[RMDB]
The record gives the reactivity of an RNA of 177 nucleotides to DMS and 2A3.
Conditions: 150 mM KOAc, 10 mM MgCl2 and 150 mM bicine (pH 8.5), 24 C.
For DMS the reverse transcriptase was MarathonRT.
The 2A3 profile rests on 2,141 reads.
2A3 is a SHAPE reagent: it acylates the 2'-hydroxyl of flexible nucleotides of all four kinds.
For DMS, 2,246 sequencing reads were counted.
RNA sequence: GGGAACGACUCGAGUAGAGUCGAAAAAGCAAUGGAAAUCUGGCGGCCCACAUGAACAUCCGGGUGUACAAUUCCGGAUACAGCGUGUGUGGCACGGACUCAAGAAGGUGCUAGACACCAACGGCUAGUUUUAAAUCCUGUUCGCAGGAUUUAAAACAAAAGAAACAACAACAACAAC
Reactivity to DMS in 0.01 (KOAc 150mM, MgCl2 10mM, bicine 150mM(pH8.5), 24C), signal-to-noise 3, nucleotides 027 to 126: a060g020c040a070a130u000g030g000a100a120a190u000c020u010g030g030c120g010g000c020c000c010a020c010a020u000g000a090a230c160a030u000c010c000g010g010g000u000g010u010a090c300a130a110u010u000c000c000g020g000a020u000a010c180a080g010c050g010u000g010u000g000u010g050g030c020a050c050g010g010a100c080u010c050a100a080g010a070a150g000g000u000g000c030u010a090g010a150c050a140c010c000a050a070c130g020g000c100u000a100
Reactivity to 2A3 in 0.01 (KOAc 150mM, MgCl2 10mM, bicine 150mM(pH8.5), 24C), signal-to-noise 2, nucleotides 027 to 126: a000g030c050a050a070u120g050g040a070a060a070u030c030u030g100g030c110g050g040c050c030c000a000c000a010u000g010a040a010c000a040u000c000c000g010g030g030u070g050u060a080c080a080a090u200u050c000c020g000g020a000u020a020c040a030g050c060g000u000g000u040g030u250g030g000c010a000c000g010g020a010c010u020c120a040a080g110a020a050g070g000u040g000c010u050a040g020a070c020a010c000c010a020a000c020g050g030c040u040a030